[RMDB]
RNA sequence: GGGAACGACUCGAGUAGAGUCGAAAAGGUAUCCACUUCGGUGGAUACCAAAGGCGAUCCCAGCAUCAGGGAACAUCAACAAUAGAUGCAUCCCUAACGCCAAAAUUCCGGAUUUCGAUCCGGAAAAUACAUCUUGAUGUUUCGACAUCAAGAUGUAAAAAGAAACAACAACAACAAC
Reactivity to DMS in 0.01 (KOAc 150mM, MgCl2 10mM, bicine 150mM(pH8.5), 24C), signal-to-noise 5, nucleotides 027 to 126: g020g000u000a000u000c000c000a000c000u000u020c230g030g010u010g000g010a010u000a020c000c000a000a050a050g010g060c030g010a120u000c000c010c010a210g010c120a080u010c190a000g000g020g010a090a180c000a010u010c010a070a190c240a100a150u010a130g000a010u000g000c070a100u000c010c010c000u000a050a080c030g010c020c030a110a050a100a150u010u000c000c000g000g000a010u000u000u010c180g000a020u000c000c000g000g000a000a000a040a110
Reactivity to 2A3 in 0.01 (KOAc 150mM, MgCl2 10mM, bicine 150mM(pH8.5), 24C), signal-to-noise 5, nucleotides 027 to 126: g000g000u000a010u000c000c000a000c000u040u060c180g130g000u000g000g000a000u000a000c010c000a010a040a000g010g000c010g010a100u010c010c010c010a010g090c040a070u170c090a010g000g000g010a010a040c000a010u020c040a010a170c060a240a170u110a220g010a010u000g020c050a110u020c010c000c000u000a040a020c020g010c010c000a020a130a000a030u080u010c010c000g010g000a010u050u060u170c180g060a010u040c000c000g000g000a020a000a000a000